[RMDB]
RNA sequence: GGGAACGACUCGAGUAGAGUCGAAAAUACUUCUCAAAAGUAGUGUGUGAUGUAUUCUUCUCGUUUGUUCAAGCAAUUUACAAUUUCAUCCUAACCAUACUAAGCGACAUAAUAUCCUUGUUAGCAGGAGCAAUAAACAACAUAAUCUCUACAUUGACUAACGGUCGUGGUUCGCCACGACCGUUAGAAAAGAAACAACAACAACAAC
Reactivity to 2A3 in 0.01 (KOAc 150mM, MgCl2 10mM, bicine 150mM(pH8.5), 24C), signal-to-noise 1, nucleotides 027 to 156: u070a020c000u030u000c050u000c000a080a060a070a040g130u080a040g020u000g000u000g000u000g120a140u070g040u040a120u020u060c000u000u050c040u040c060g050u020u020u020g050u030u100c010a000a010g060c020a030a100u100u080u050a140c160a120a060u050u080u140c040a040u160c000c030u050a010a040c040c060a070u080a150c100u050a120a050g000c230g060a020c000a010u220a210a070u130a200u070c070c020u030u060g000u050u090a000g050c010a020g030g010a000g020c040a000a050u050a130a050a030c050a030a040c000a060u140a060a040u090c000u030c010u170a060c000a140u100u090g000a010